[RMDB]
RNA sequence: GGGAACGACUCGAGUAGAGUCGAAAAGAUAUGGAAACACCGCAGCUUUUGACGAGAAACCAUCGGAAACGAUGGCACUCUCGAUAAGCUGGGUGUUUCCUAAGUCAAAGACGGACUUCGGUCCGUCCGGGAGUUAUAACUUCGGUUAUAACUCCCGAAAAGAAACAACAACAACAAC
Reactivity to DMS in 0.01 (KOAc 150mM, MgCl2 10mM, bicine 150mM(pH8.5), 24C), signal-to-noise 3, nucleotides 027 to 126: g000a020u000a300u030g000g000a000a000a010c000a010c010c000g020c010a010g010c000u000u000u000u000g020a250c130g000a020g020a030a160a170c000c000a000u010c000g000g000a130a160a180c000g010a010u000g000g000c100a050c150u000c000u000c000g020a110u010a000a010g030c000u010g030g000g000u000g010u000u000u000c000c000u000a000a080g000u000c030a120a090a140g000a030c000g000g010a010c000u000u000c190g050g010u010c020c000g010u000c000
Reactivity to 2A3 in 0.01 (KOAc 150mM, MgCl2 10mM, bicine 150mM(pH8.5), 24C), signal-to-noise 3, nucleotides 027 to 126: g010a020u100a030u160g000g000a000a010a010c010a000c020c050g300c220a010g000c030u220u090u210u300g270a150c040g000a000g000a070a070a050c000c010a000u000c000g010g010a040a060a050c000g000a000u000g000g000c010a060c030u030c000u000c000g060a060u030a140a010g000c000u030g020g000g000u000g000u000u000u000c000c000u000a010a010g000u000c010a010a060a240g000a010c010g000g000a000c010u070u090c300g150g000u030c000c000g000u000c000